[RMDB]
RNA sequence: GGGAACGACUCGAGUAGAGUCGAAAAGCAUGUCGCGAGGUUAACCCGUGUGGGGUAGCCGUAGCGAAAGCGAGUCCGAAUAGGGCGUUUGUAGUGGCAUGUUCUAGACCCGAAGCGGAGUGAUCUAACAACGGUGUUGAUUCGUCAACACCGUUGUAAAAGAAACAACAACAACAAC
Reactivity to 2A3 in 0.01 (KOAc 150mM, MgCl2 10mM, bicine 150mM(pH8.5), 24C), signal-to-noise 4, nucleotides 027 to 126: g010c000a000u020g000u010c010g010c010g010a190g050g000u030u100a160a150c000c000c030g050u210g170u200g100g000g000g000u000a000g000c030c000g020u060a000g000c000g000a000a000a000g000c000g000a040g030u000c010c000g020a090a180u250a260g010g000g020c010g020u030u110u200g160u110a020g010u000g000g000c010a010u000g000u000u020c020u030a050g010a070c000c020c010g050a080a010g040c080g040g030a040g020u030g010a100u030c040u030a040
Reactivity to DMS in 0.01 (KOAc 150mM, MgCl2 10mM, bicine 150mM(pH8.5), 24C), signal-to-noise 2, nucleotides 027 to 126: g010c010a000u020g010u000c000g000c010g000a170g000g020u000u010a060a060c000c000c010g000u050g030u070g030g040g010g020u000a010g020c020c000g010u020a050g010c010g020a140a060a070g030c010g000a040g000u000c000c020g010a110a050u060a220g000g020g000c010g050u020u010u010g010u000a090g030u010g010g020c030a000u030g000u000u020c020u030a120g000a130c010c010c000g000a130a130g010c120g000g000a100g030u000g000a080u020c020u020a160
An RNA of 177 nucleotides, treated with 2A3 and DMS and read out base by base. 2A3 adducts were read by reverse transcription with SuperScript II with manganese. Values cover nucleotides 27 to 126. DMS adducts were read by reverse transcription with MarathonRT.